An RNA of 177 nucleotides, treated with DMS and 2A3 and read out base by base. The DMS profile rests on 1,604 reads. Values cover nucleotides 27 to 126.
RNA sequence: GGGAACGACUCGAGUAGAGUCGAAAAUAACGGACUAGGAAACUCGAUCUUUUAAGUGGUAAUCCUAGCGAAUCCACCGCGAGGAAACUAGGACACUAACCAUGUGAUCCCGGACGCUAGAAGAAAAGCAACUAGGAAUAUUCGUAUUCCUAGUUGCAAAAGAAACAACAACAACAAC
Reactivity to DMS in 0.01 (KOAc 150mM, MgCl2 10mM, bicine 150mM(pH8.5), 24C), signal-to-noise 3, nucleotides 027 to 126: u020a060a130c140g000g010a120c020u000a040g020g010a120a130a170c020u000c060g010a120u000c030u000u000u000u020a110a060g020u000g020g030u000a100a140u000c060c010u000a010g000c000g030a240a120u000c010c010a070c150c150g000c080g010a020g000g000a040a090a160c010u000a040g010g020a170c090a010c070u000a060a150c140c070a060u000g010u000g000a050u000c000c020c010g000g000a190c040g000c040u000a000g000a130a140g000a060a070a100a100
Reactivity to 2A3 in 0.01 (KOAc 150mM, MgCl2 10mM, bicine 150mM(pH8.5), 24C), signal-to-noise 3, nucleotides 027 to 126: u120a020a020c040g020g020a040c030u040a040g110g040a110a150a090c000u030c030g050a120u050c150u090u280u040u110a230a070g020u010g020g000u040a050a030u020c000c030u020a010g000c010g000a010a040u020c020c030a040c070c090g060c140g020a020g010g020a020a000a090c020u020a010g000g000a010c010a020c090u060a090a050c010c010a040u120g020u010g050a090u010c020c000c000g010g030a030c050g000c040u020a030g030a150a000g050a020a180a000a020